[RMDB]
RNA sequence: GGGAACGACUCGAGUAGAGUCGAAAAGGACUGGGAGUAAUGUCAGUCAGAUGUUGCCAGGAGAACAAGUGAGUAAUGCGGAAUUACGUCCCAAACCGGGGAUAACGAGGUCACCGCUCUGUCGAAAUACGGGGAUAUGGUUCGCCAUAUCCCCGUAAAAAGAAACAACAACAACAAC
Reactivity to DMS in 0.01 (KOAc 150mM, MgCl2 10mM, bicine 150mM(pH8.5), 24C), signal-to-noise 2, nucleotides 027 to 126: g020g010a010c020u010g060g030g000a110g020u010a060a110u000g000u000c040a010g000u000c040a050g000a080u000g010u000u000g010c030c040a080g010g010a100g010a040a030c070a030a080g010u000g000a110g020u000a010a070u000g000c140g030g020a130a090u000u000a050c080g010u030c010c030c030a070a070a080c210c070g000g000g000g000a080u000a060a080c080g010a050g020g000u010c040a100c060c070g010c060u000c070u000g000u010c060g000a020a110a100
Structure probing data (DMS) for a 177-nucleotide construct. Conditions: 150 mM KOAc, 10 mM MgCl2 and 150 mM bicine (pH 8.5), 24 C. Reactivities are given for positions 27 through 126.